[RMDB]
RNA sequence: GGGAACGACUCGAGUAGAGUCGAAAAUACCAUCCCGCCGCCGGGCAAGGAGCGGCUGGAAGGCGCCGACGCGAUGCAUGCCUGGGUGCGCGUCUGGUGCGGCGAAACGGCGGGCUGGAUCGAGCUCACCGAGCGCAUGAUUCGUCAUGCGCUCGGUAAAAGAAACAACAACAACAAC
Reactivity to 2A3 in 0.01 (KOAc 150mM, MgCl2 10mM, bicine 150mM(pH8.5), 24C), signal-to-noise 2, nucleotides 027 to 126: u140a010c000c010a000u020c000c000c000g000c010c020g000c000c000g000g070g000c110a100a030g140g040a090g060c130g040g010c050u040g020g100a140a100g160g000c060g020c010c020g020a060c010g010c000g050a060u090g090c020a020u030g040c030c130u120g110g000g000u080g040c040g000c000g010u020c150u300g070g030u080g000c000g000g000c080g070a080a050a050c000g010g000c000g000g000g010c040u000g000g000a000u170c140g030a010g070c000u010c020
Reactivity to DMS in 0.01 (KOAc 150mM, MgCl2 10mM, bicine 150mM(pH8.5), 24C), signal-to-noise 1, nucleotides 027 to 126: u050a200c040c040a040u000c010c000c000g000c000c000g000c000c000g000g000g000c030a090a120g010g030a110g000c000g030g010c000u000g000g030a050a070g030g010c000g020c090c000g050a060c090g020c010g030a260u010g010c010a020u000g000c010c020u000g000g050g040u000g020c010g030c030g000u010c020u000g000g040u000g000c110g010g030c070g000a030a130a200c060g000g000c070g000g000g060c070u030g070g000a090u020c120g000a040g010c110u000c160